[RMDB]
RNA sequence: GGGAACGACUCGAGUAGAGUCGAAAAUCAGUCCAUGAGGAAGCAUCUUCUUUGAUGGCUUUGACGAUUGGGGGAAGGGAGCGUAGGCAAGGACGCAAGUGUCCUGUGGUAGCUGUGAGUGACCCUGACUGAUGGGCAGGAAGGAAACAGAUAUGUCCAGUACGCCACUAUUCGUAGUGGCGUACUGAAAAGAAACAACAACAACAAC
Reactivity to 2A3 in 0.01 (KOAc 150mM, MgCl2 10mM, bicine 150mM(pH8.5), 24C), signal-to-noise 2, nucleotides 027 to 156: u050c010a020g070u000c030c000a050u060g050a020g030g050a040a010g060c020a110u010c040u140u000c020u130u140u150g060a030u060g090g050c020u090u020u080g130a060c020g070a070u000u130g000g000g000g000g050a000a030g040g010g030a030g080c050g010u150a040g000g050c050a060a020g020g000a010c050g030c080a100a080g150u060g030u170c010c010u060g020u040g010g030u050a040g020c030u030g040u040g070a050g010u070g010a080c020c000c000u030g020a040c040u020g080a080u110g010g060g030c050a030g000g050a040a020g020g030a010a050a030c010a020g050a060u070a100u220g070u000c000
Reactivity to DMS in 0.01 (KOAc 150mM, MgCl2 10mM, bicine 150mM(pH8.5), 24C), signal-to-noise 2, nucleotides 027 to 156: u000c060a130g060u020c020c070a050u000g010a150g000g020a070a060g090c160a050u000c000u000u000c090u000u010u000g010a040u010g000g020c040u000u000u000g030a130c070g030a170u000u000g020g000g040g040g010a050a100g000g000g020a090g070c030g010u000a060g050g020c040a120a100g060g010a050c020g030c070a080a160g000u000g020u000c020c000u080g020u010g050g010u020a050g030c020u030g040u050g030a040g060u010g010a070c040c000c020u000g000a110c060u030g000a100u000g010g000g000c050a040g020g020a100a080g030g000a120a080a180c000a110g000a110u000a190u000g030u000c020